Overview: The record gives the reactivity of an RNA of 177 nucleotides to DMS and 2A3.
RNA sequence: GGGAACGACUCGAGUAGAGUCGAAAAAUAAAUAUGAGUUAUAUGACUGACGGAACGUGGAAUUAACCACAUGAAGUAUAACGAUGACAAUGCCGACCGUCUGGGCGUUGCAUCCGCUCCAAAAAAACCACAUCUUGUAGUUCGCUACAAGAUGUGGAAAAGAAACAACAACAACAAC
Reactivity to DMS in 0.01 (KOAc 150mM, MgCl2 10mM, bicine 150mM(pH8.5), 24C), signal-to-noise 1, nucleotides 027 to 126: a100u000a020a010a020u020a120u010g000a250g030u000u000a050u000a050u000g010a140c020u000g060a060c000g020g010a160a050c230g010u000g010g000a150a090u000u000a110a060c000c020a020c010a210u020g000a080a150g000u000a020u000a120a060c080g010a020u000g000a110c020a010a020u010g000c030c020g000a120c030c020g000u000c010u010g020g000g000c000g030u000u000g000c030a050u000c020c040g030c020u030c000c020a000a010a150a010a090a080a180
Reactivity to 2A3 in 0.01 (KOAc 150mM, MgCl2 10mM, bicine 150mM(pH8.5), 24C), signal-to-noise 1, nucleotides 027 to 126: a020u180a040a030a000u300a160u220g030a030g060u110u010a150u040a070u210g110a070c030u000g000a010c010g000g010a200a000c040g050u040g010g070a090a060u300u070a180a100c020c010a010c030a010u090g080a030a010g040u090a030u010a130a020c040g000a010u040g070a070c010a000a000u040g000c020c000g040a040c000c000g020u000c030u020g080g020g000c000g000u000u040g000c000a040u000c020c090g020c010u010c050c010a170a000a000a060a000a000a110